Notes: The record gives the reactivity of an RNA of 177 nucleotides to 2A3 and DMS. For 2A3 the reverse transcriptase was SuperScript II with manganese.

RNA sequence: GGGAACGACUCGAGUAGAGUCGAAAAGACUGCGUGCACUUGAGACGAUAUCGAGCCGGAAAUUAAUCGAUAAUGUCUCCUGUAGUGGAUACGAUCCGGCAAGUAUCGACUACAUGUGCUCGUAGGAGACUAUAAUUAUGUUCGCAUAAUUAUAGUCAAAAGAAACAACAACAACAAC
Reactivity to 2A3 in 0.01 (KOAc 150mM, MgCl2 10mM, bicine 150mM(pH8.5), 24C), signal-to-noise 9, nucleotides 027 to 126: g060a020c000u000g000c000g000u010g000c000a000c010u040u050g000a000g010a010c020g010a010u010a010u130c020g010a020g000c000c000g010g090a070a120a040u270u230a070a110u140c060g040a050u060a130a090u200g040u010c010u060c040c020u140g070u190a080g080u080g130g000a010u010a030c010g010a020u010c000c000g000g000c010a030a010g000u000a000u000c010g060a010c000u100a100c000a020u040g000u000g000c000u000c000g000u000a000g000g020a030
Reactivity to DMS in 0.01 (KOAc 150mM, MgCl2 10mM, bicine 150mM(pH8.5), 24C), signal-to-noise 6, nucleotides 027 to 126: g010a170c000u000g000c000g000u000g010c000a010c020u030u030g010a020g000a050c010g010a050u000a000u050c010g010a300g000c000c020g000g000a120a150a090u030u030a120a110u020c060g010a060u010a030a100u030g000u000c040u000c010c070u020g020u010a060g020u010g000g010a010u000a030c010g000a110u000c010c010g000g000c000a120a180g010u000a010u000c000g000a090c000u000a050c000a050u040g010u000g000c010u000c000g010u000a010g000g010a120